[RMDB]
RNA sequence: GGGAACGACUCGAGUAGAGUCGAAAAUCAUAUUUCUGUUUGCUCAGCCCAGACAUCAGAACUCAGAUGCCUGUAGAGACUAGGCAAGUUACAUAAAAGGGUGAAGAGUGCCAGGUGGGAAGUAUAGCCAACUGGAAAUGGAUGGCAUAUUUUUAUACUUCCCUUAUUCAUUCGUGAAUAAGGGAAGAAAAGAAACAACAACAACAAC
Reactivity to 2A3 in 0.01 (KOAc 150mM, MgCl2 10mM, bicine 150mM(pH8.5), 24C), signal-to-noise 5, nucleotides 027 to 156: u090c040a040u060a160u200u100u020c020u030g070u060u060u080g010c020u020c050a030g020c000c000c010a030g020a030c020a030u050c020a020g050a070a040c020u040c090a050g060a220u070g030c010c000u050g010u090a050g040a020g030a210c070u090a010g020g020c000a000a040g040u030u090a070c050a060u170a110a180a010a020g030g020g010u040g040a100a060g030a030g010u040g020c030c010a040g020g030u050g030g020g020a040a020g020u060a030u030a090g020c030c020a020a010c070u080g060g040a040a130a080u120g030g010a020u020g000g030c020a010u050a050u100u070u020u060u050a130u060a070
Reactivity to DMS in 0.01 (KOAc 150mM, MgCl2 10mM, bicine 150mM(pH8.5), 24C), signal-to-noise 3, nucleotides 027 to 156: u010c050a120u000a100u000u000u000c030u010g010u000u000u000g040c020u000c040a090g020c020c060c000a150g010a050c010a030u000c010a080g010a080a110c090u000c070a120g010a070u000g020c000c000u000g020u000a100g010a210g010a070c060u010a030g010g000c000a060a080g020u010u000a080c110a080u010a080a040a080a130g010g020g070u000g010a100a090g020a100g000u010g020c030c030a070g000g010u000g030g010g010a050a110g010u000a090u000a100g030c020c000a030a090c020u020g010g010a070a070a130u000g000g000a120u000g010g030c040a150u000a010u010u000u020u030u000a080u000a180